Chemical mapping of a 177-nucleotide RNA with 2A3 and DMS. High 2A3 reactivity points to a flexible backbone, as in loops and unpaired stretches. DMS adducts were read by reverse transcription with MarathonRT. For 2A3, 7,555 sequencing reads were counted. The reactions ran in a buffer of 150 mM KOAc, 10 mM MgCl2 and 150 mM bicine (pH 8.5), at 24 C.

[RMDB]
RNA sequence: GGGAACGACUCGAGUAGAGUCGAAAAGAUAUGGAUCGAGCGACGAUCGUGCGUAACAUCCUUUCGGAAACGAAAGGUGGCACGGGAGCUCGCGUCCUAAGUCAAAACAAGGCCUUCGGGCCUUGAAGAUUACUGCAAUCUUCGGAUUGCAGUAAUCAAAAGAAACAACAACAACAAC
Reactivity to 2A3 in 0.01 (KOAc 150mM, MgCl2 10mM, bicine 150mM(pH8.5), 24C), signal-to-noise 3, nucleotides 027 to 126: g020a010u080a020u170g010g010a010u030c010g020a010g040c010g300a300c020g010a110u040c000g000u020g000c010g030u050a020a030c040a300u250c010c000u000u000u020c030g000g040a050a070a080c010g000a010a010a000g000g000u010g010g000c000a000c000g000g000g000a010g000c000u000c010g020c040g010u020c000c000u020a160a010g050u040c030a000a000a110a170c010a020a000g000g010c020c000u150u210c300g110g000g010c000c000u000u010g000a000a000
Reactivity to DMS in 0.01 (KOAc 150mM, MgCl2 10mM, bicine 150mM(pH8.5), 24C), signal-to-noise 5, nucleotides 027 to 126: g010a030u000a300u000g000g000a000u000c000g000a010g010c000g000a070c250g000a030u010c000g000u000g000c010g000u010a010a040c270a030u010c000c000u000u010u010c000g010g000a090a090a170c000g010a000a010a000g010g010u010g010g010c000a010c010g000g000g000a070g000c000u000c000g010c250g000u000c000c000u010a050a180g000u000c030a110a090a130a210c020a010a010g010g010c000c000u000u020c210g030g010g000c000c000u000u000g000a050a100